Structure probing data (2A3 and DMS) for a 177-nucleotide construct. 2A3 adducts were read by reverse transcription with SuperScript II with manganese. The DMS profile rests on 1,232 reads.
RNA sequence: GGGAACGACUCGAGUAGAGUCGAAAAUACUUUUACUACAUCAUUUUUACCAAUUAAUGAUAGUGUUAAUUGUAAACCUCCAGUACCCCAUCCCUUAGCUAUAGGCAACUCUCUUGAACCAAAGGGACAUCGCUAGUGAUUUCGAUCACUAGCGAUGAAAAGAAACAACAACAACAAC
Reactivity to 2A3 in 0.01 (KOAc 150mM, MgCl2 10mM, bicine 150mM(pH8.5), 24C), signal-to-noise 4, nucleotides 027 to 126: u040a000c010u030u040u010u000a020c040u060a020c010a030u010c010a030u000u040u030u070u160a260c040c080a130a090u160u110a050a020u030g030a020u060a240g050u030g030u120u100a050a030u040u020g040u030a020a080a130c010c020u020c010c010a060g020u070a120c000c000c010c030a030u050c000c000c030u040u050a010g000c040u050a020u040a130g070g080c020a020a100c000u020c030u040c000u050u070g050a050a050c030c020a030a040a000g010g010g030a010
Reactivity to DMS in 0.01 (KOAc 150mM, MgCl2 10mM, bicine 150mM(pH8.5), 24C), signal-to-noise 1, nucleotides 027 to 126: u000a010c010u000u010u000u000a000c040u000a020c060a110u020c000a020u000u000u000u000u000a090c160c230a000a140u020u000a000a020u020g000a050u010a160g060u000g000u000u000a000a000u000u000g000u000a040a060a050c020c010u010c020c110a150g000u000a050c030c000c000c030a010u020c000c000c040u000u010a080g090c080u000a100u040a080g020g010c010a160a160c290u000c050u000c010u020u050g010a050a120c150c090a000a160a000g000g000g000a030